This 177-nucleotide RNA was probed chemically with DMS and 2A3.
The DMS profile rests on 3,122 reads.
For 2A3 the reverse transcriptase was SuperScript II with manganese.
The 2A3 profile rests on 3,350 reads.

[RMDB]
RNA sequence: GGGAACGACUCGAGUAGAGUCGAAAAGGACCCCACUCCUGCGAGACAGGAGUAAUCCUAAACAGGGUUUUCACCCUUCCUUUAGUUUCCUUCCUCUCCUGGAGAGGUCUUCCGCCCUAGCCCGGUCCUGAUGUGAUUAGUUCGCUAAUCACAUCAGAAAAGAAACAACAACAACAAC
Reactivity to DMS in 0.01 (KOAc 150mM, MgCl2 10mM, bicine 150mM(pH8.5), 24C), signal-to-noise 3, nucleotides 027 to 126: g000g000a060c010c010c050c170a100c010u000c000c000u000g000c120g010a050g020a110c120a010g000g020a030g020u000a010a030u000c170c020u000a010a030a030c220a030g010g000g010u000u000u010u000c230a070c000c010c000u000u000c040c020u010u000u000a060g010u000u000u000c010c010u000u000c050c020u000c020u000c000c030u010g000g000a050g020a120g000g000u000c020u000u000c040c020g000c010c010c010u000a090g000c030c010c030g020g020u000c100
Reactivity to 2A3 in 0.01 (KOAc 150mM, MgCl2 10mM, bicine 150mM(pH8.5), 24C), signal-to-noise 2, nucleotides 027 to 126: g020g000a010c010c020c030c030a050c010u000c010c000u020g040c110g090a080g040a090c160a100g040g000a000g000u010a000a020u020c020c000u050a060a020a040c300a150g020g040g040u060u030u240u300c140a050c010c000c000u000u020c000c000u020u040u020a020g000u000u040u000c010c030u010u070c010c010u000c010u000c010c020u040g010g000a020g000a010g000g030u020c010u030u010c020c010g010c000c000c000u020a050g010c040c040c020g040g040u050c010